The record gives the reactivity of an RNA of 177 nucleotides to 2A3 and DMS. It was measured as part of the RMDB library TTRDEL. For 2A3 the reverse transcriptase was SuperScript II with manganese.
[RMDB]
RNA sequence: GGGAACGACUCGAGUAGAGUCGAAAAAAAAGAUAUGGAAGAGUCUCUAGCGUGGCCGAGGAUCAUACCGAAAGUCGGAAACGACUAGUAGCUGUAUGGGAGGCUCGGGCUCUUCCUAAGUCAAAAAGAUUACGACAAAGUUCGCUUUGUCGUAAUCAAAAGAAACAACAACAACAAC
Reactivity to 2A3 in 0.01 (KOAc 150mM, MgCl2 10mM, bicine 150mM(pH8.5), 24C), signal-to-noise 1, nucleotides 027 to 126: a000a010a010a030g050a050u070a050u130g020g000a000a000g020a010g060u030c060u060c140u300a170g240c170g210u290g060g000c040c030g060a240g060g000a020u030c000a000u020a010c000c010g050a160a070a000g010u030c000g010g030a050a050a000c000g010a000c000u000a000g070u050a010g030c210u140g000u010a030u020g000g000g020a010g000g020c020u000c000g000g020g000c000u000c010u020u000c000c000u020a040a000g000u010c020a000a010a090a090a000
Reactivity to DMS in 0.01 (KOAc 150mM, MgCl2 10mM, bicine 150mM(pH8.5), 24C), signal-to-noise 2, nucleotides 027 to 126: a080a050a110a120g000a010u000a250u010g000g000a010a030g000a020g000u000c010u000c160u000a170g030c150g030u010g020g040c010c000g000a030g040g010a050u010c000a000u000a000c010c020g030a130a090a060g000u000c020g000g000a040a030a100c030g000a010c000u000a080g020u000a120g000c250u000g000u000a000u000g000g010g000a040g010g010c000u000c060g010g010g000c000u000c000u000u000c000c010u000a010a090g000u000c010a060a050a080a110a110
Notes
The reactions ran in a buffer of 150 mM KOAc, 10 mM MgCl2 and 150 mM bicine (pH 8.5), at 24 C. Reactivities are given for positions 27 through 126. For 2A3, 1,610 sequencing reads were counted.